[RMDB]
RNA sequence: GGGAACGACUCGAGUAGAGUCGAAAAUCACUCGUGCCCAAAAAGGUAUUCUUUGUGUUAUGACAUCUCAGGCACUCUUUGAGUCCUUAGAGUUUACUGAAUUGUCUUUUACUAAUUACAAGCUCCAUGACCCAGGAGUUCGCUCCUGGGAAAAGAAACAACAACAACAAC
Reactivity to DMS in 0.01 (KOAc 150mM, MgCl2 10mM, bicine 150mM(pH8.5), 24C), signal-to-noise 4, nucleotides 027 to 129: u030c120a090c020u050c030g000u000g020c000c000c000a050a080a030a070a030g000g020u030a060u000u000c060u080u050u030g040u020g010u020u060a020u060g020a050c020a070u110c060u010c050a000g020g000c300a030c030u000c010u030u000u070g040a100g040u000c100c010u000u000a030g000a010g030u000u000u000a120c060u050g020a020a040u030u030g010u010c030u010u050u040u080a090c100u070a050a050u050u030a060c050a010a080g030c070u030c000c000a090u060g020a110
Reactivity to 2A3 in 0.01 (KOAc 150mM, MgCl2 10mM, bicine 150mM(pH8.5), 24C), signal-to-noise 9, nucleotides 027 to 129: u070c010a030c040u030c010g040u060g030c000c000c000a050a050a010a000a010g110g000u130a110u150u030c050u040u130u060g080u020g040u110u100a100u170g020a010c020a110u030c030u000c070a020g030g000c100a020c010u000c040u010u060u160g080a080g080u090c000c020u000u010a000g010a000g010u020u060u120a110c010u010g030a030a030u060u030g040u030c000u020u110u020u060a100c050u040a040a050u090u060a060c030a070a000g010c040u020c010c020a090u150g050a080